This 177-nucleotide RNA was probed chemically with DMS. The RNA was probed in 150 mM KOAc, 10 mM MgCl2 and 150 mM bicine (pH 8.5) at 24 C.
[RMDB]
RNA sequence: GGGAACGACUCGAGUAGAGUCGAAAAGAUAUGGAUGUUCUCCCCACCUUCGAUGCACAUCGAUCAAGAAAAGCCUCGGAAACGAGGCUUUUCUUGGGAGUGCUAAGAAGAGGAACAUCCUAAGUCAGACUACAACAUUGUUCGCAAUGUUGUAGUCAAAAGAAACAACAACAACAAC
Reactivity to DMS in 0.01 (KOAc 150mM, MgCl2 10mM, bicine 150mM(pH8.5), 24C), signal-to-noise 2, nucleotides 027 to 126: g000a100u000a160u020g010g080a020u020g020u010u020c000u000c120c010c020c030a300c160c000u010u000c000g020a300u050g000c010a010c020a160u000c150g000a060u060c000a030a000g000a040a000a000a000g040c000c000u000c030g000g010a050a070a150c000g050a000g010g010c000u000u000u000u000c000u000u010g010g040g010a040g000u000g010c010u020a240a230g000a010a020g000a060g010g000a030a000c010a000u000c000c000u000a030a160g000u000c100a130